Chemical mapping of a 177-nucleotide RNA with 2A3 and DMS. The DMS profile rests on 1,398 reads. The data come from the RNA Mapping Database (RMDB), library VIROID.
[RMDB]
RNA sequence: GGGAACGACUCGAGUAGAGUCGAAAAAGGACCCCUUCAGCGAACAGAAGAGCGCUAUCGCGUGAGGAGUAAGACCAUAGCGAUAGGAAGAGAUGCUAGGAGUAGGGAGAGACCGAAGCGAGGAGGAUCAGUACCAAAAGUUCGCUUUUGGUACUGAAAAAGAAACAACAACAACAAC
Reactivity to 2A3 in 0.01 (KOAc 150mM, MgCl2 10mM, bicine 150mM(pH8.5), 24C), signal-to-noise 1, nucleotides 027 to 126: a000g050g020a050c010c030c000c030u020u060c050a020g010c000g020a050a020c020a090g090a150a020g030a060g020c000g000c060u010a010u030c020g020c010g020u050g030a140g080g020a090g050u160a100a030g060a090c010c030a040u040a050g000c000g000a010u020a000g020g020a070a000g020a010g010a030u160g020c030u020a020g010g050a040g050u050a080g050g070g040a060g000a030g010a050c010c050g040a020a000g060c050g030a030g010g060a030g010g020a070
Reactivity to DMS in 0.01 (KOAc 150mM, MgCl2 10mM, bicine 150mM(pH8.5), 24C), signal-to-noise 2, nucleotides 027 to 126: a120g020g030a160c030c020c020c030u000u000c040a100g020c000g000a060a040c030a140g000a060a080g000a100g000c060g020c000u000a010u010c050g040c010g000u010g000a130g000g000a140g010u030a100a150g010a070c010c000a030u000a080g010c030g000a030u000a010g000g020a060a140g010a110g010a100u010g010c060u000a040g010g000a070g010u030a060g020g010g010a080g000a100g020a090c070c010g020a080a070g010c070g000a030g010g020a050g010g010a130